[RMDB]
RNA sequence: GGGAACGACUCGAGUAGAGUCGAAAACGCCAUCGGCCUUCAGACAGCCGUCAGCCGUGCCGAGCACGAGGCGACCGCGCAUCACGCGCUUGAAGUCGAUGCCAUAUUCCAGAAGCUUGGUGUGCGAUAGCGUUUUAGUGUUCGCACUAAAACGCUAAAAAGAAACAACAACAACAAC
Reactivity to DMS in 0.01 (KOAc 150mM, MgCl2 10mM, bicine 150mM(pH8.5), 24C), signal-to-noise 4, nucleotides 027 to 126: c120g000c210c020a050u000c020g020g020c080c050u000u000c070a060g020a120c140a080g010c040c020g020u000c050a080g050c110c020g000u000g010c010c130g000a140g020c020a030c040g010a090g000g010c020g010a030c060c080g010c010g000c000a120u000c200a110c220g000c030g010c040u010u000g000a010a070g010u000c040g000a070u000g010c080c040a090u010a120u000u000c010c010a150g010a110a090g020c050u000u000g000g010u000g020u000g010c050g020a160
Reactivity to 2A3 in 0.01 (KOAc 150mM, MgCl2 10mM, bicine 150mM(pH8.5), 24C), signal-to-noise 3, nucleotides 027 to 126: c060g040c000c000a020u020c000g030g020c040c040u060u020c010a300g070a300c010a050g120c030c030g010u020c020a040g090c020c010g050u040g000c040c140g130a040g000c010a010c060g040a010g000g030c000g010a020c010c050g000c010g000c010a070u140c060a060c120g030c000g000c000u010u040g030a040a010g020u030c000g010a040u050g030c020c020a100u100a090u090u030c010c000a020g050a160a020g040c040u050u060g020g010u070g020u030g050c010g050a060